[RMDB]
This 177-nucleotide RNA was probed chemically with DMS and 2A3.
RNA sequence: GGGAACGACUCGAGUAGAGUCGAAAAUCGCGGAUCCACAGCUGAUGAUCGUACCCAUGUCUAGAGACAUGACUACUAGGUACCAUGAGUACAGUACAUACUAGGUAGUAGUACCAUGCAUGAGUACGGUGAAGUGCAAGUUCGCUUGCACUUCACCAAAAGAAACAACAACAACAAC
Reactivity to DMS in 0.01 (KOAc 150mM, MgCl2 10mM, bicine 150mM(pH8.5), 24C), signal-to-noise 2, nucleotides 027 to 126: u020c080g000c050g030g010a120u000c050c080a050c070a100g000c050u000g030a050u000g000a080u000c060g010u000a030c000c030c000a020u010g010u010c020u040a090g030a300g030a030c100a030u020g000a090c080u000a050c050u000a010g000g010u000a030c040c010a100u000g000a080g050u030a020c100a170g010u000a020c050a090u000a300c060u010a120g020g000u010a030g000u000a050g000u000a060c030c070a040u020g020c000a000u000g010a090g000u000a010c010
Reactivity to 2A3 in 0.01 (KOAc 150mM, MgCl2 10mM, bicine 150mM(pH8.5), 24C), signal-to-noise 2, nucleotides 027 to 126: u060c040g000c000g080g010a030u000c010c000a060c040a060g020c070u070g060a170u070g000a030u060c040g000u040a030c070c000c000a000u030g020u030c070u070a090g090a050g030a230c000a070u160g040a020c020u030a040c020u000a070g090g090u000a020c000c000a140u190g060a020g070u060a010c000a020g030u030a020c000a150u100a030c020u030a030g280g030u080a030g030u010a000g000u020a080c000c000a040u080g000c000a020u020g010a030g020u020a010c060